Annotation
This 207-nucleotide RNA was probed chemically with 2A3. Reactivities are given for positions 27 through 156. 2A3 adducts were read by reverse transcription with SuperScript II with manganese.
RNA sequence: GGGAACGACUCGAGUAGAGUCGAAAAUGAUCACGUUCGACAUGUCGACGUCAUCGGUUAUUACUGACCGAGAGCACAAUAACCUUCAGCCGUAUAUUUCCAUGAACUACAUCAUUGCUCUUGGAAUUCCAGGAGCCAGUGGUGGAGGAGAUAAGAAACCGGGAUAGUGAUUCGUCACUAUCCCGGUAAAAGAAACAACAACAACAAC
Reactivity to 2A3 in 0.01 (KOAc 150mM, MgCl2 10mM, bicine 150mM(pH8.5), 24C), signal-to-noise 1, nucleotides 027 to 156: u130g040a000u070c020a010c020g100u290u150c010g010a000c130a300u220g030u080c000g010a010c000g020u030c000a010u050c020g000g020u000u060a000u150u080a120c030u120g090a140c020c030g060a070g030a070g220c050a010c000a000a080u050a080a000c010c010u070u080c100a100g050c010c030g010u090a060u040a080u180u040u010c010c010a000u100g060a000a030c000u080a000c090a000u010c000a000u000u000g000c000u000c000u040u000g000g170a220a220u300u110c000c000a000g000g000a000g040c010c050a000g000u010g000g000u000g000g000a020g010g000a100g080a030u230a090a020g080a100a120